An RNA of 207 nucleotides, treated with DMS and 2A3 and read out base by base.
For DMS the reverse transcriptase was MarathonRT.
DMS (dimethyl sulfate) methylates the pairing face of unpaired adenines and cytosines.
Values cover nucleotides 27 to 156.
[RMDB]
RNA sequence: GGGAACGACUCGAGUAGAGUCGAAAAGGGCAUAACCUGUCUGCCAUCUCGACAGAUCCCAAGGUCUGUCUCUUUCUGUCACUGCCUUUGCCUAGAUAGAAGCCAGAAAGGAAAAACUGGCCUAGGAUAGUCUCUGUUUCCAGAAACGUAGUGGAUAAGCAUAAAAUGCAUUCGUGCAUUUUAUGCUAAAAGAAACAACAACAACAAC
Reactivity to DMS in 0.01 (KOAc 150mM, MgCl2 10mM, bicine 150mM(pH8.5), 24C), signal-to-noise 2, nucleotides 027 to 156: g040g040g000c100a150u000a070a250c030c010u000g010u000c030u010g020c020c030a100u000c190u000c050g020a020c030a030g000a030u000c010c010c100a100a180g010g030u000c000u000g030u000c000u000c020u000u000u000c030u010g000u000c060a140c050u010g000c010c050u000u000u010g010c010c060u000a130g000a150u000a060g020a060a090g030c050c020a030g000a030a140a070g030g000a080a110a080a100a200c030u000g010g020c010c020u010a060g010g000a080u010a090g000u000c040u000c050u000g020u000u000u000c050c040a300g000a100a100a090c070g000u000a090g020u000g000g030a110u000a020
Reactivity to 2A3 in 0.01 (KOAc 150mM, MgCl2 10mM, bicine 150mM(pH8.5), 24C), signal-to-noise 4, nucleotides 027 to 156: g040g000g010c050a060u060a120a090c020c020u040g070u060c030u030g060c020c010a110u070c100u100c080g030a030c020a010g040a030u050c060c080c110a060a130g040g000u000c000u030g030u010c030u010c010u080u110u020c030u040g050u050c020a020c060u030g010c010c000u050u050u120g040c000c000u020a020g020a050u110a100g130a160a010g030c000c000a040g070a140a100a060g090g040a070a090a070a020a030c010u000g000g000c000c000u020a000g020g000a020u030a060g030u010c010u010c010u090g040u040u060u000c050c000a010g050a030a060a010c070g060u090a070g050u080g060g070a060u110a220